[RMDB]
RNA sequence: GGGAACGACUCGAGUAGAGUCGAAAAACCUUUGUGGAUAGGCUAACACGCUUGGAUUUACCAGGCCGGUGAUAUACCCAUUGGGUAUAUUAAACGCCUGGUUGUCAGCGUGGAACCCUAUCCACUCUGGUAAAAGUAUGCCGUUCGCGGCAUACAAGUACCACCCAAGUUUCGACUUGGGUGGUACAAAAGAAACAACAACAACAAC
Reactivity to 2A3 in 0.01 (KOAc 150mM, MgCl2 10mM, bicine 150mM(pH8.5), 24C), signal-to-noise 2, nucleotides 027 to 156: a000c000c000u000u010u000g010u010g000g000a010u010a000g000g000c000u110a240a000c000a000c010g030c070u140u110g190g040a070u300u180u230a020c010c000a020g010g020c040c030g160g000u010g000a000u000a000u010a000c000c010c130a240u270u300g000g000g000u000a000u000a000u000u080a210a300a000c020g000c000c000u000g010g010u000u000g000u010c000a000g000c000g000u000g010g000a010a000c000c000c010u000a000u010c000c000a000c000u000c000u000g000g000u000a000a020a020a060g010u010a010u040g000c030c000g000u000u100c300g030c040g110g000c060a040u080a000c050a000a040

The record gives the reactivity of an RNA of 207 nucleotides to 2A3. Values cover nucleotides 27 to 156.